[RMDB]
RNA sequence: GGGAACGACUCGAGUAGAGUCGAAAAAGGGAGUGUUGUCACAAGCCAAGGAAUGCCAGCAGCUACCAGAAACCGGAAGGGCAAGGAAUGCAUUCUCCCCAGAGCCUUCAGAGGAAGCAUGACUCUGACUUCCCUUGCAGUUCGCUGCAAGGGAAGUAAAAGAAACAACAACAACAAC
Reactivity to DMS in 0.01 (KOAc 150mM, MgCl2 10mM, bicine 150mM(pH8.5), 24C), signal-to-noise 2, nucleotides 027 to 126: a100g030g010g000a120g000u010g000u000u000g000u010c070a090c090a080a150g040c000c040a050a110g000g010a060a070u000g000c030c080a070g000c050a060g000c060u000a110c130c030a070g010a030a090a110c080c030g010g030a130a110g000g010g040c020a090a100g000g010a080a060u000g000c030a030u000u000c060u010c020c000c030c030a080g000a080g000c070c070u010u000c020a080g010a030g020g010a040a070g040c110a070u000g010a180c020u000c000u000g000